[RMDB]
RNA sequence: GGGAACGACUCGAGUAGAGUCGAAAAAACGCUUCACAACCUGAAAGAAGCGCCUGUUAUCAGGACGGUUGAUACAUUUACCGGUGCAGACCUCUGCAAACACCGGGUUGCAGAACAUCGCGACGGACAAGGGAGGAUACCUUCGGGUAUCCUCCAAGAAGUAGACUAAGUUCGCUUAGUCUACUUCAAAAGAAACAACAACAACAAC
Reactivity to 2A3 in 0.01 (KOAc 150mM, MgCl2 10mM, bicine 150mM(pH8.5), 24C), signal-to-noise 4, nucleotides 027 to 156: a000a000c030g000c020u010u010c010a050c020a070a040c010c000u010g000a030a000a000g000a010a010g010c000g040c000c000u190g020u250u260a230u300c020a000g020g000a010c030g020g000u010u030g020a100u100a130c030a070u090u120u190a100c010c010g010g000u090g000c010a020g040a140c020c030u060c020u020g030c030a000a060a020c130a010c070c090g300g030g000u000u020g000c000a010g010a060a050c020a050u100c040g010c010g050a040c010g030g020a070c110a140a080g080g000g000a000g000g000a000u000a000c000c030u040u110c110g060g000g000u000a000u010c000c000u000c000c000a000a000
Reactivity to DMS in 0.01 (KOAc 150mM, MgCl2 10mM, bicine 150mM(pH8.5), 24C), signal-to-noise 1, nucleotides 027 to 156: a080a030c000g000c010u010u020c040a270c080a030a300c000c010u000g000a020a080a300g000a010a020g010c020g030c000c030u010g010u000u010a160u000c020a090g010g000a110c000g070g000u000u010g000a300u000a040c110a090u010u000u000a080c000c000g010g010u010g000c020a080g000a120c150c080u010c040u020g030c040a080a060a010c010a300c030c030g020g020g020u010u000g020c020a020g010a050a120c070a070u000c060g010c020g010a080c020g000g030a140c080a080a170g040g000g040a000g010g010a020u010a000c010c010u000u000c270g030g020g080u000a000u010c000c000u020c010c030a000a030